RNA sequence: GGGAACGACUCGAGUAGAGUCGAAAAGCUUCAUGUGCAAGCGUUGAGAACGCUCAAUCUUAGUGCCAUCCUUCCAAGUGAGCAUAACGAUAAGAAUCGUAGCCCCAAGAAUCAUGGUAAACCAACCCAGUGCUAUAAUAUUCGUAUUAUAGCACUGAAAAGAAACAACAACAACAAC
Reactivity to 2A3 in 0.01 (KOAc 150mM, MgCl2 10mM, bicine 150mM(pH8.5), 24C), signal-to-noise 9, nucleotides 027 to 126: g010c020u060u040c050a060u140g040u070g120c070a040a030g010c010g020u030u100g170a080g030a140a030c040g020c060u020c040a060a090u020c030u050u130a050g020u030g040c020c010a040u020c030c020u050u030c020c010a100a030g030u050g080a040g030c010a040u060a120a000c020g030a030u040a100a160g110a120a040u030c020g000u010a030g040c010c010c000c000a020a020g030a060a030u080c050a050u030g020g010u080a120a060a090c040c010a010a030c000c020
Reactivity to DMS in 0.01 (KOAc 150mM, MgCl2 10mM, bicine 150mM(pH8.5), 24C), signal-to-noise 9, nucleotides 027 to 126: g020c030u000u000c070a090u010g010u000g010c130a100a050g020c040g010u010u000g010a140g010a130a080c120g010c010u000c070a080a090u000c050u000u010a100g020u000g010c020c020a040u000c030c030u000u000c050c060a060a100g010u010g010a070g020c030a080u000a070a050c070g010a040u010a100a130g010a070a160u000c010g020u000a100g000c040c010c010c050a100a080g010a070a060u000c050a050u000g000g010u000a040a070a130c090c090a060a090c100c080